[RMDB]
Chemical mapping of a 177-nucleotide RNA with 2A3 and DMS. The RNA was probed in 150 mM KOAc, 10 mM MgCl2 and 150 mM bicine (pH 8.5) at 24 C. Source: RMDB library OK1LIB, as collected in RNAgym.

RNA sequence: GGGAACGACUCGAGUAGAGUCGAAAAGGAAACAAGGACGCAGGAAAAGGGAAGAACGCCUCGGUGAGAGCGUCGGGUGUACGUACACCGGAAUCCCGAGGCGCUUUCGCGGUUCAAGGUUCUUCUCGAUUAAAUGGUACUUCGGUACCAUUUAAUCAAAAGAAACAACAACAACAAC
Reactivity to 2A3 in 0.01 (KOAc 150mM, MgCl2 10mM, bicine 150mM(pH8.5), 24C), signal-to-noise 9, nucleotides 027 to 126: g060g020a040a040a020c040a030a070g060g020a020c030g030c080a040g040g140a060a110a060a040g090g010g010a030a020g010a120a050c020g060c010c000u010c020g030g020u230g030a090g010a020g050c060g090u070c040g050g020g000u030g000u030a100c180g050u080a030c030a040c030c040g030g030a030a020u030c010c000c000g000a030g010g000c000g000c000u010u020u010c010g000c010g050g020u070u060c060a070a040g050g010u020u000c000u010u000c020u010c030
Reactivity to DMS in 0.01 (KOAc 150mM, MgCl2 10mM, bicine 150mM(pH8.5), 24C), signal-to-noise 6, nucleotides 027 to 126: g010g000a070a040a050c060a060a180g010g000a050c030g020c060a100g000g010a040a050a090a140g010g000g010a020a020g020a050a100c030g000c010c010u000c030g010g020u050g010a030g010a070g010c100g010u010c020g010g020g020u000g000u010a120c300g000u050a070c050a040c050c010g000g000a120a080u010c010c000c010g010a030g000g000c000g010c000u000u010u000c030g010c020g000g000u010u010c080a060a170g010g010u000u000c020u010u000c040u010c070